[RMDB]
Structure probing data (2A3 and DMS) for a 177-nucleotide construct. The reactions ran in a buffer of 150 mM KOAc, 10 mM MgCl2 and 150 mM bicine (pH 8.5), at 24 C.

RNA sequence: GGGAACGACUCGAGUAGAGUCGAAAAUGUUGAUCGGCUGUUGUCUGACCUCGCCCAUUUGGAUGCCUCGCUGCCUAAGCGCGGUGGGGAGGAUGAACCGUUUCCGGUUUUCGAUGCCGCGCUCCGCGCUGAGGAUCACUUUCGAGUGAUCCUCAGCAAAAGAAACAACAACAACAAC
Reactivity to 2A3 in 0.01 (KOAc 150mM, MgCl2 10mM, bicine 150mM(pH8.5), 24C), signal-to-noise 3, nucleotides 027 to 126: u180g000u040u070g030a100u110c030g050g000c020u010g020u160u020g040u030c030u040g070a150c020c020u010c030g040c000c000c030a040u020u020u070g070g010a060u080g030c000c020u020c010g040c010u060g000c000c020u070a070a050g020c000g000c010g030g030u030g000g040g030g020a050g020g040a080u160g070a010a000c010c030g030u060u150u050c130c030g060g000u080u010u000u120c060g020a060u130g010c030c000g000c000g010c020u020c010c020g070c000
Reactivity to DMS in 0.01 (KOAc 150mM, MgCl2 10mM, bicine 150mM(pH8.5), 24C), signal-to-noise 2, nucleotides 027 to 126: u010g000u000u010g010a070u000c050g000g010c040u050g000u020u000g010u010c010u000g000a040c070c030u010c040g000c010c000c000a120u010u000u010g000g000a050u100g010c060c000u010c020g030c020u010g020c030c040u010a100a090g000c010g000c020g020g010u010g000g020g010g030a050g030g000a060u020g020a040a040c040c040g010u010u050u000c160c020g030g000u010u010u020u000c030g020a210u020g010c010c000g020c000g000c010u000c010c030g010c160

Notes: High 2A3 reactivity points to a flexible backbone, as in loops and unpaired stretches.